[RMDB]
RNA sequence: GGGAACGACUCGAGUAGAGUCGAAAAGGCUGUGAGCUCUCAUCCCUGUGGUAAGGGCUUCCUUGAAGUAGUCCAGGCCUGGCCACAAGAAGUUGGCAGAGGCUAAGGAGUCUUUAACUUAGGUUUCAGUUAUAUGGGGAAUGAUAUGGGAAGGAGACGACCUAUUUAGGUUCGCCUAAAUAGGUCGAAAAGAAACAACAACAACAAC
Reactivity to 2A3 in 0.01 (KOAc 150mM, MgCl2 10mM, bicine 150mM(pH8.5), 24C), signal-to-noise 3, nucleotides 027 to 156: g050g030c040u060g040u060g120a020g010c020u020c000u020c060a070u080c020c000c030u050g080u030g020g040u090a050a060g020g000g010c000u190u120c030c000u060u100g030a080a010g050u130a020g080u050c010c060a030g000g050c000c000u010g040g020c010c010a020c030a040a110g300a030a030g090u150u070g030g000c020a030g030a000g300g000c020u030a060a070g000g000a000g000u010c000u040u100u050a160a070c030u010u080a030g050g050u060u100u050c040a010g020u090u050a090u020a070u190g000g000g030g000a050a090u070g070a040u040a100u150g040g010g030a010a020g020g040a050g030a010
Reactivity to DMS in 0.01 (KOAc 150mM, MgCl2 10mM, bicine 150mM(pH8.5), 24C), signal-to-noise 1, nucleotides 027 to 156: g040g020c040u020g030u000g020a070g000c030u000c060u020c080a070u000c010c030c030u020g050u020g020g020u000a040a070g080g020g010c010u000u000c030c010u010u000g010a110a090g000u020a090g000u000c040c050a210g010g030c020c000u000g010g000c000c020a030c000a170a130g040a160a160g020u000u010g020g000c030a070g030a070g020g010c030u000a100a060g010g010a040g000u000c020u000u000u000a020a090c070u000u000a070g030g000u000u000u000c000a060g010u000u000a080u010a090u010g000g000g020g020a070a090u020g010a090u010a050u000g010g000g000a090a030g010g010a170g030a210
Description: The record gives the reactivity of an RNA of 207 nucleotides to 2A3 and DMS. The data come from the RNA Mapping Database (RMDB), library OK3TST. For 2A3 the reverse transcriptase was SuperScript II with manganese.